An RNA of 177 nucleotides, treated with 2A3 and DMS and read out base by base. The 2A3 profile rests on 9,564 reads. 2A3 adducts were read by reverse transcription with SuperScript II with manganese.
[RMDB]
RNA sequence: GGGAACGACUCGAGUAGAGUCGAAAAGGGUGAGGUGCUGCGGCUGCGAUGGCGACCAGGUUGUAUGCCCUUGCCGCAGAGAGUGAUUCGUGCCCGUGUGCGUGGACGACAGGUCUAUCUGGUGCCACCUCACAUUAUUGUUCGCAAUAAUGUGAGGAAAAGAAACAACAACAACAAC
Reactivity to 2A3 in 0.01 (KOAc 150mM, MgCl2 10mM, bicine 150mM(pH8.5), 24C), signal-to-noise 8, nucleotides 027 to 126: g090g010g030u090g040a070g040g060u140g030c030u020g010c000g020g000c010u050g040c080g150a150u110g010g000c010g030a050c020c030a030g070g050u120u110g100u100a090u190g030c010c000c000u020u060g000c000c010g000c010a000g000a000g000a000g060u150g030a150u050u070c040g030u060g110c000c020c020g010u060g010u040g070c060g010u100g010g040a020c020g020a050c060a050g030g050u020c030u080a120u030c020u050g050g000u040g010c000c010a030
Reactivity to DMS in 0.01 (KOAc 150mM, MgCl2 10mM, bicine 150mM(pH8.5), 24C), signal-to-noise 5, nucleotides 027 to 126: g020g010g010u010g000a070g000g010u020g010c010u000g010c020g000g000c000u010g010c190g020a110u010g010g000c010g010a070c030c050a060g000g010u010u020g030u010a060u030g000c010c020c070u010u020g000c010c000g020c020a030g000a110g010a110g000u030g000a130u020u020c030g000u020g000c040c010c020g030u020g020u020g000c060g020u010g010g000a050c030g010a110c160a080g000g010u010c040u010a070u020c000u000g000g010u010g010c030c030a160
The reactions ran in a buffer of 150 mM KOAc, 10 mM MgCl2 and 150 mM bicine (pH 8.5), at 24 C.